[RMDB]
RNA sequence: GGGAACGACUCGAGUAGAGUCGAAAAAUCUGAGGGACAAAGCCGCCCCCGGGCGCUCCCCUCGGAGAUCCACUGGGUGGGUUCACAUCCCCAACCCGCGGGCCGGCUGUUCUUCUUUCUCUUUCCUAUGCUCCGUUCUUCGGAACGGAGAAAAGAAACAACAACAACAAC
Reactivity to 2A3 in 0.01 (KOAc 150mM, MgCl2 10mM, bicine 150mM(pH8.5), 24C), signal-to-noise 3, nucleotides 027 to 129: a000u060c070u080g000a010g020g000g010a000c040a030a240a000g030c050c010g030c000c010c000c010c000g020g020g000c050g000c050u040c000c010c020c010u010c040g000g000a000g000a040u080c040c000a000c110u090g060g080g000u050g010g040g010u130u150c050a100c000a170u060c000c030c010c020a040a080c020c000c000g020c030g000g030g000c130c040g020g000c000u000g000u000u040c010u000u010c000u010u080u020c030u020c000u000u040u030c020c000u080a080u200g030
Reactivity to DMS in 0.01 (KOAc 150mM, MgCl2 10mM, bicine 150mM(pH8.5), 24C), signal-to-noise 2, nucleotides 027 to 129: a120u060c000u010g010a040g000g000g000a040c030a010a010a000g010c010c010g000c210c000c040c100c070g000g000g000c140g050c000u020c060c000c020c030u060c040g020g060a000g030a000u050c060c020a100c110u060g030g040g050u090g000g000g000u030u020c090a180c200a160u010c000c010c020c060a150a180c000c030c000g020c300g060g020g050c200c050g090g010c050u010g010u000u000c030u010u010c020u000u000u000c080u020c080u120u020u040c000c020u050a100u100g020
Conditions: 150 mM KOAc, 10 mM MgCl2 and 150 mM bicine (pH 8.5), 24 C. An RNA of 170 nucleotides, treated with 2A3 and DMS and read out base by base. For DMS, 7,600 sequencing reads were counted. DMS adducts were read by reverse transcription with MarathonRT.